[RMDB]
Source: RMDB library OK3TST, as collected in RNAgym.
An RNA of 207 nucleotides, treated with DMS and 2A3 and read out base by base.
The DMS profile rests on 2,996 reads.
RNA sequence: GGGAACGACUCGAGUAGAGUCGAAAAAGGAUUCAUCCAAGUCGGCUUUAUGUUUGCUUCUGCCAGGCAUUCUAGAUGCCCCAUGUCUAGGAUCUCUUUAGGCAGGAGAGAGGGUGAUGGUGUAGGAGGACCCAUUUCUUGGCUUGCAGAUUCCAAAGAUAGUAUAAUCCUUCGGGAUUAUACUAUCAAAAGAAACAACAACAACAAC
Reactivity to DMS in 0.01 (KOAc 150mM, MgCl2 10mM, bicine 150mM(pH8.5), 24C), signal-to-noise 2, nucleotides 027 to 156: a090g020g010a090u000u000c050a090u010c030c020a060a230g000u010c040g020g000c020u010u030u010a030u010g000u000u010u010g010c000u000u000c020u020g010c030c030a140g020g020c300a030u000u000c020u020a060g020a040u000g020c090c010c120c050a190u010g030u000c000u000a050g010g010a060u000c040u000c050u000u000u020a120g020g010c020a040g030g000a050g000a100g010a090g010g010g050u020g010a090u010g000g030u000g010u000a050g020g010a100g020g010a080c040c000c020a140u000u000u000c060u000u010g000g010c090u000u020g010c050a090g000a260u000u000c010c010a030a140a300
Reactivity to 2A3 in 0.01 (KOAc 150mM, MgCl2 10mM, bicine 150mM(pH8.5), 24C), signal-to-noise 5, nucleotides 027 to 156: a000g090g010a080u130u060c040a060u050c100c020a020a030g100u040c030g050g030c040u100u130u110a070u170g090u050u160u190g040c010u000u010c000u000g000c010c000a010g010g020c010a000u000u010c010u010a000g010a010u030g040c030c000c020c020a060u110g000u000c000u000a000g010g000a010u000c060u020c010u100u150u200a090g000g000c010a010g020g000a010g000a000g010a000g020g020g010u050g010a040u060g010g040u030g010u040a020g000g050a010g000g010a030c000c000c000a030u040u070u030c030u040u060g030g010c010u010u040g010c020a020g000a140u060u030c020c030a050a040a020
For DMS the reverse transcriptase was MarathonRT. Values cover nucleotides 27 to 156. Conditions: 150 mM KOAc, 10 mM MgCl2 and 150 mM bicine (pH 8.5), 24 C.